[RMDB]
The record gives the reactivity of an RNA of 207 nucleotides to DMS and 2A3.
Source: RMDB library RSTRND, as collected in RNAgym.
Values cover nucleotides 27 to 156.
Conditions: 150 mM KOAc, 10 mM MgCl2 and 150 mM bicine (pH 8.5), 24 C.
The 2A3 profile rests on 4,966 reads.
For DMS, 2,792 sequencing reads were counted.
RNA sequence: GGGAACGACUCGAGUAGAGUCGAAAAGUCAAAUUGCGGGAACAUCCUAAGAGCUAUCGACCACCAAGCAGGCUGCUGAAAGGCGUCUGUGGCCGGAUUAACGACUCCGGGUAAGGUAACAGCGUCGGUAGAUGAAGCUUCCCUGACCGGAGGCUGACCAUCCUUUUUACUUCGGUAAAAAGGAUGGAAAAGAAACAACAACAACAAC
Reactivity to DMS in 0.01 (KOAc 150mM, MgCl2 10mM, bicine 150mM(pH8.5), 24C), signal-to-noise 1, nucleotides 027 to 156: g030u010c050a040a100a150u000u000g020c030g000g020g010a150a120c070a110u000c020c020u000a070a130g000a130g020c000u000a010u000c000g020a000c000c000a020c000c030a150a220g000c000a020g020g000c000u000g030c020u000g030a100a100a160g030g010c000g000u000c020u000g030u000g010g010c000c000g010g000a080u000u020a090a100c150g010a110c200u000c000c000g030g000g070u010a020a120g010g030u000a080a080c060a000g030c060g010u000c020g000g000u010a000g000a060u000g010a060a000g020c000u000u000c010c000c000u030g030a190c060c040g000g010a060g020g000c020u010g000a110
Reactivity to 2A3 in 0.01 (KOAc 150mM, MgCl2 10mM, bicine 150mM(pH8.5), 24C), signal-to-noise 5, nucleotides 027 to 156: g030u030c030a030a090a160u170u170g070c110g010g050g020a100a080c030a130u100c020c020u130a150a050g040a010g130c000u000a000u000c000g000a000c000c000a000c030c070a000a000g000c000a000g020g010c030u200g000c000u030g220a080a040a040g050g000c000g000u000c000u000g020u050g000g000c000c000g020g010a020u110u070a140a110c090g040a020c020u000c010c000g020g010g000u050a170a010g000g000u000a000a020c000a000g000c010g040u000c000g010g000u000a000g000a000u080g050a020a000g010c000u010u000c000c000c010u020g040a020c000c030g000g000a010g000g000c000u010g010a020